About this RNA: Chemical mapping of a 177-nucleotide RNA with DMS.
RNA sequence: GGGAACGACUCGAGUAGAGUCGAAAAGAUAUGGACUAAUGAUUGGUAUGUCCCUUCAGAGCUGGAUCGUCGGAAACGACGGCACAGCGACGAAGAAGGGAGCAUACCAAUCAUUAGUCCUAAGUCACUACGUCUAACAGUUCGCUGUUAGACGUAGAAAAGAAACAACAACAACAAC
Reactivity to DMS in 0.01 (KOAc 150mM, MgCl2 10mM, bicine 150mM(pH8.5), 24C), signal-to-noise 3, nucleotides 027 to 126: g000a070u000a300u000g000g010a010c000u000a010a010u020g000a020u010u010g000g020u000a000u000g000u010c000c000c000u000u000c010a060g000a230g010c000u010g000g000a030u000c010g000u000c000g020g000a130a140a280c000g010a020c000g000g010c300a020c000a020g020c010g000a130c280g000a130a080g000a000a040g020g000g000a040g010c000a010u000a000c000c000a000a000u000c000a000u000u000a000g010u000c000c000u000a010a080g000u000c020a300
Conditions: 150 mM KOAc, 10 mM MgCl2 and 150 mM bicine (pH 8.5), 24 C.